[RMDB]
RNA sequence: GGGAACGACUCGAGUAGAGUCGAAAACGAGGCAUCCUCGGGCCAGGGCAUGAAGCGUUCUUGAUCCGCGCAUUGCACCCUCCGCACAUGCGUUUUCUCGACCACGCCACCCUCCUGACAGGAGUAGCAGUAUGCCACCCAGCGGUCAGGAAGGUUCCUGUAUCCUCGUGUUCGCACGAGGAUACAGAAAAGAAACAACAACAACAAC
Reactivity to 2A3 in 0.01 (KOAc 150mM, MgCl2 10mM, bicine 150mM(pH8.5), 24C), signal-to-noise 2, nucleotides 027 to 156: c000g010a050g040g120c090a060u080c010c010u070c050g000g010g030c060c070a060g040g000g000c060a060u100g100a110a100g030c000g090u130u090c040u120u050g030a110u010c050c080g000c000g010c050a000u010u030g000c030a090c010c000c090u030c050c120g060c050a030c010a150u040g020c030g020u020u000u230u080c070u000c040g120a160c020c060a020c070g040c040c000a010c020c010c000u010c000c000u010g000a010c020a060g000g100a110g070u010a020g000c040a030g150u200a150u220g000c000c000a010c010c000c000a020g110c100g100g030u030c020a000g000g010a050a040g100g040u110u010c030